[RMDB]
Description
An RNA of 207 nucleotides, treated with DMS and 2A3 and read out base by base. Conditions: 150 mM KOAc, 10 mM MgCl2 and 150 mM bicine (pH 8.5), 24 C. Reactivities are given for positions 27 through 156. It was measured as part of the RMDB library OK3TST. High 2A3 reactivity points to a flexible backbone, as in loops and unpaired stretches. High DMS reactivity at an A or C suggests that its Watson-Crick edge is free.

RNA sequence: GGGAACGACUCGAGUAGAGUCGAAAAUUAGUUGUCAUGCUUGACAGGUUGUGAUAGUCAUGGUGAUGUUUAUUAGUUGCAUUAAUUUUUAAGAAUCAACUUUGGUCACAGACCUGAGAUACGUGCAUGACUAUUGCAAAUAAGGACGAGAGUCCCAACCCGGUUAUCAUUUCGAUGAUAACCGGGUAAAAGAAACAACAACAACAAC
Reactivity to DMS in 0.01 (KOAc 150mM, MgCl2 10mM, bicine 150mM(pH8.5), 24C), signal-to-noise 1, nucleotides 027 to 156: u030u000a110g000u000u000g010u010c050a130u010g010c020u010u020g060a270c070a040g020g050u010u050g040u000g000a040u000a030g010u000c060a060u000g000g050u000g020a050u030g020u000u000u020a020u020u010a100g010u000u000g000c200a100u000u000a070a060u000u000u000u000u000a120a120g010a060a090u000c020a000a060c000u000u000u010g030g060u010c020a110c130a230g020a040c020c010u010g000a150g020a140u000a040c100g000u030g000c040a030u000g000a020c020u000a020u000u000g000c000a000a060a110u000a060a070g010g000a060c000g060a300g010a300g000u000c000c010c030a090
Reactivity to 2A3 in 0.01 (KOAc 150mM, MgCl2 10mM, bicine 150mM(pH8.5), 24C), signal-to-noise 2, nucleotides 027 to 156: u040u010a030g060u020u060g000u000c010a030u110g030c010u140u080g100a090c090a050g130g090u030u000g000u010g010a010u000a040g110u040c000a040u010g000g090u120g030a090u030g120u140u250u140a140u070u050a110g010u000u030g010c030a000u000u120a150a240u180u250u150u150u170a100a030g120a070a010u080c020a010a020c000u060u160u140g090g000u010c090a090c010a300g030a040c010c010u030g030a080g000a080u100a140c120g000u040g080c000a000u010g000a000c000u000a010u000u010g020c010a030a030a060u210a110a100g020g000a000c030g070a020g010a000g140u040c060c060c000a020